The record gives the reactivity of an RNA of 177 nucleotides to 2A3 and DMS. For DMS, 51,767 sequencing reads were counted. In probing experiments dimethyl sulfate is read out at A N1 and C N3, which are open when not base-paired.
[RMDB]
RNA sequence: GGGAACGACUCGAGUAGAGUCGAAAAUGUCUUGGACGGGGAACGUUGCAAUGCUCUGUAUAACUGACCCGUUUACAGGGUUCCAGCGGAUGAUGGUGUUAUCACAACCACAGGAGAGGCACUGCAAACCUAAUUAAUGGUUCGCCAUUAAUUAGGUAAAAGAAACAACAACAACAAC
Reactivity to 2A3 in 0.01 (KOAc 150mM, MgCl2 10mM, bicine 150mM(pH8.5), 24C), signal-to-noise 7, nucleotides 027 to 126: u060g010u010c010u030u050g030g010a010c010g000g000g010g020a060a040c030g030u030u030g010c040a080a160u110g020c030u020c030u090g030u040a110u040a210a030c010u010g100a070c000c010c020g010u010u010u020a020c010a000g010g000g000u030u050c030c010a020g020c020g050g030a070u080g010a050u050g060g060u030g030u110u110a140u160c040a010c010a100a060c020c010a030c020a040g020g060a060g020a030g020g000c020a010c060u050g010c020a100a050
Reactivity to DMS in 0.01 (KOAc 150mM, MgCl2 10mM, bicine 150mM(pH8.5), 24C), signal-to-noise 9, nucleotides 027 to 126: u010g010u000c040u000u000g010g010a070c050g010g000g000g000a100a160c140g010u000u000g020c070a070a080u010g010c050u000c040u000g010u000a050u010a040a040c040u000g000a180c070c050c060g010u000u000u000a050c080a040g000g000g010u000u000c110c040a070g020c050g000g000a090u010g010a080u000g010g010u000g000u000u000a080u010c090a060c090a080a080c040c030a050c070a080g010g000a070g010a090g000g010c030a050c060u000g010c120a050a090